[RMDB]
RNA sequence: GGGAACGACUCGAGUAGAGUCGAAAAACAUGUCAUUCUUCUCAUACCAUGUUGCAGCUGGCAAAAUGAUGUCCGAUACCAAAGUGGUAGAGGUAUUGCGGAAAUCGGUGGUGAGCAUCAAGUCGAGAGUUGUCUCUCGAUUCGUCGAGAGACAACUAAAAGAAACAACAACAACAAC
Reactivity to DMS in 0.01 (KOAc 150mM, MgCl2 10mM, bicine 150mM(pH8.5), 24C), signal-to-noise 2, nucleotides 027 to 126: a080c070a060u010g010u000c110a080u010u010c050u000u000c030u000c030a110u000a130c100c020a020u000g000u000u000g010c050a130g010c070u000g000g000c040a060a030a070a060u010g000a050u000g010u000c010c010g010a150u000a030c020c030a110a100a100g030u010g030g010u000a030g010a190g000g010u000a030u010u010g010c050g010g000a030a040a030u000c030g010g040u000g000g010u000g010a140g020c030a010u000c090a050a080g000u000c070g000a120g010
Reactivity to 2A3 in 0.01 (KOAc 150mM, MgCl2 10mM, bicine 150mM(pH8.5), 24C), signal-to-noise 2, nucleotides 027 to 126: a000c040a070u100g050u030c060a110u100u040c030u080u000c010u000c020a050u090a100c040c030a030u110g050u100u060g050c070a050g000c030u080g000g040c040a010a020a050a160u140g020a020u020g060u080c010c010g020a000u000a030c010c020a110a080a110g200u140g140g000u050a080g030a020g040g020u060a080u030u190g050c040g000g080a010a050a030u050c010g000g000u010g000g010u030g040a020g000c000a020u060c070a070a000g080u040c040g050a010g010

Chemical mapping of a 177-nucleotide RNA with DMS and 2A3. Source: RMDB library OK2TST, as collected in RNAgym. For DMS the reverse transcriptase was MarathonRT. The RNA was probed in 150 mM KOAc, 10 mM MgCl2 and 150 mM bicine (pH 8.5) at 24 C. 2A3 is a SHAPE reagent: it acylates the 2'-hydroxyl of flexible nucleotides of all four kinds.